[RMDB]
RNA sequence: GGGAACGACUCGAGUAGAGUCGAAAAUAGGACUAAGUGUAUUAUACAUUGCGAUGACAGGUGAUAAUUCAGAUUUAUUUACGUCGUUACCUGCUGCUAUGCUUGGUGCAAAUUACUCACGUAAAUAAGUAUGGUCACCUUUCGAGGUGACCAUACUAAAAGAAACAACAACAACAAC
Reactivity to 2A3 in 0.01 (KOAc 150mM, MgCl2 10mM, bicine 150mM(pH8.5), 24C), signal-to-noise 1, nucleotides 027 to 126: u040a000g000g020a030c040u070a080a000g020u000g010u020a010u220u040a070u060a080c040a080u070u150g050c100g080a040u050g010a040c000a000g010g040u030g000a010u100a070a050u160u120c070a010g070a130u110u190u030a100u050u130u050a050c040g040u020c020g000u050u040a010c000c000u010g000c040u080g020c010u020a040u150g000c010u040u050g000g000u050g040c020a000a000a230u090u030a110c040u020c030a060c030g070u070a030a030a030u130a030
Reactivity to DMS in 0.01 (KOAc 150mM, MgCl2 10mM, bicine 150mM(pH8.5), 24C), signal-to-noise 2, nucleotides 027 to 126: u020a160g000g000a100c080u010a020a050g010u010g010u000a070u010u000a210u000a090c040a050u000u000g020c100g050a160u010g030a060c060a060g010g010u020g000a010u000a060a090u010u030c210a080g000a120u010u000u000a010u000u000u000a070c070g010u020c150g020u000u010a030c020c030u000g030c050u030g050c130u000a030u010g000c070u000u010g030g000u000g030c110a050a070a100u000u000a100c040u010c130a070c260g020u000a020a010a060u030a040